Source information:
The record gives the reactivity of an RNA of 177 nucleotides to 2A3 and DMS. Source: RMDB library OK1LIB, as collected in RNAgym. The 2A3 profile rests on 1,014 reads. The reactions ran in a buffer of 150 mM KOAc, 10 mM MgCl2 and 150 mM bicine (pH 8.5), at 24 C.

RNA sequence: GGGAACGACUCGAGUAGAGUCGAAAAACGCCCCAGUUGACAGCCAGUGGCACUUGUGCUCUUGGAAAUCUGAUCGGUUUGGCCCGCCUGGCUGACUCACAUGUCGGAUUUGUUUACGAAUGGGGAGCGAGUCCGUAUGGUUCGCCAUACGGACUCGAAAAGAAACAACAACAACAAC
Reactivity to 2A3 in 0.01 (KOAc 150mM, MgCl2 10mM, bicine 150mM(pH8.5), 24C), signal-to-noise 3, nucleotides 027 to 126: a000c110g010c000c000c030c000a030g000u040u050g080a030c000a020g000c010c000a020g020u100g030g040c050a000c070u050u140g030u120g110c010u060c000u090u100g090g050a100a060a010u040c060u110g020a090u050c040g000g000u080u100u120g130g000c000c000c000g070c020c000u010g010g000c000u000g020a050c020u030c020a070c000a050u240g080u060c000g030g000a060u060u060u050g070u060u130u040a030c020g080a200a130u040g030g000g000g000a020g060
Reactivity to DMS in 0.01 (KOAc 150mM, MgCl2 10mM, bicine 150mM(pH8.5), 24C), signal-to-noise 1, nucleotides 027 to 126: a080c300g000c000c000c000c000a030g000u020u030g000a190c020a000g040c000c000a060g040u010g010g000c040a030c040u020u000g000u000g020c020u010c050u020u010g000g000a090a100a020u070c040u000g080a060u000c190g010g000u000u020u000g050g000c010c010c180g000c100c010u010g000g000c000u000g010a080c080u020c100a100c120a130u000g020u000c000g050g010a140u000u030u030g040u000u000u020a010c010g020a020a090u000g000g020g010g080a070g060